[RMDB]
RNA sequence: GGGAACGACUCGAGUAGAGUCGAAAAGAUUCGGCGGCCCUGUCAUGAGGCCGAAACGAAGGCACGUACCCCUUCGAAUGGCGUCGGGGAGUCAGCGGCUAUAUAGGCGCCUAAUGCUGGCAUCCGGGAGAACCCUCAUCCUUCGGGAUGAGGGUAAAGGUUAGAUUUAGUUCGCUAAAUCUAACCUAAAAGAAACAACAACAACAAC
Reactivity to 2A3 in 0.01 (KOAc 150mM, MgCl2 10mM, bicine 150mM(pH8.5), 24C), signal-to-noise 2, nucleotides 027 to 156: g100a060u110u120c100g080g020c000g000g000c040c000c040u000g080u040c060a040u030g050a000g040g000c050c030g010a040a010a010c030g010a000a000g000g010c100a030c220g160u220a090c010c000c020c000u020u020c010g010a010a000u040g010g000c040g220u010c010g010g060g000g060a080g020u000c000a000g000c000g000g000c010u020a050u000a030u070a300g170g000c150g080c070c040u110a190a020u300g000c000u000g010g010c000a030u010c020c000g010g020g000a150g090a040a030c000c000c000u000c000a000u010c030c020u000u120c190g050g000g010a000u010g000a000g000g000g000u000a010a000
Reactivity to DMS in 0.01 (KOAc 150mM, MgCl2 10mM, bicine 150mM(pH8.5), 24C), signal-to-noise 1, nucleotides 027 to 156: g030a250u000u010c030g100g010c040g000g060c000c000c020u010g000u010c190a080u010g020a060g000g020c000c010g030a010a040a060c020g000a030a060g030g020c010a130c170g020u000a290c020c010c010c010u000u000c020g040a110a070u010g010g000c000g030u000c010g000g040g020g090a070g010u000c040a040g070c030g000g000c050u010a160u000a130u010a130g030g000c060g000c060c040u000a070a090u000g000c020u000g000g000c020a070u000c010c030g000g040g010a250g010a040a130c000c000c000u020c000a060u010c000c000u000u010c300g090g000g010a000u000g020a000g000g010g050u000a000a000